[RMDB]
RNA sequence: GGGAACGACUCGAGUAGAGUCGAAAAUCAUUGGCUUCGCUGCGCGCUGCGUUCCCUAGGCUUCAGAUGCUUCGUACUGUUGCCAACGUUGCAAUUUCCAAACGCUAAUGCGAAAGUGUGCAAACAAAUGGUAGAAUCUUUUCGAAGAUUCUACCAUAAAAGAAACAACAACAACAAC
Reactivity to 2A3 in 0.01 (KOAc 150mM, MgCl2 10mM, bicine 150mM(pH8.5), 24C), signal-to-noise 3, nucleotides 027 to 126: u080c030a030u040u080g070g010c030u090u050c040g010c060u110g030c020g010c030g010c080u080g020c020g020u010u030c000c000c000u030a050g020g000c000u020u010c030a030g030a160u070g090c030u080u080c060g060u060a070c030u020g050u060u010g030c000c030a000a030c070g030u030u070g030c030a080a100u070u100u000c030c000a080a070a000c040g000c090u120a160a050u190g020c030g060a040a010a020g100u110g020u040g030c020a030a050a060c010a000a200
Reactivity to DMS in 0.01 (KOAc 150mM, MgCl2 10mM, bicine 150mM(pH8.5), 24C), signal-to-noise 5, nucleotides 027 to 126: u010c140a120u010u010g010g020c020u000u000c030g010c050u000g000c060g010c060g030c090u000g020c030g000u000u000c000c000c000u000a120g010g010c000u000u000c030a030g000a170u000g020c110u000u000c080g020u010a130c050u000g000u000u010g010c010c010a070a080c180g030u000u000g010c060a060a090u010u000u000c020c040a050a110a130c110g010c060u000a070a110u000g010c040g010a050a050a100g010u000g010u000g000c030a060a050a080c200a050a090

An RNA of 177 nucleotides, treated with 2A3 and DMS and read out base by base. For DMS the reverse transcriptase was MarathonRT. The RNA was probed in 150 mM KOAc, 10 mM MgCl2 and 150 mM bicine (pH 8.5) at 24 C. Source: RMDB library M2PK90, as collected in RNAgym.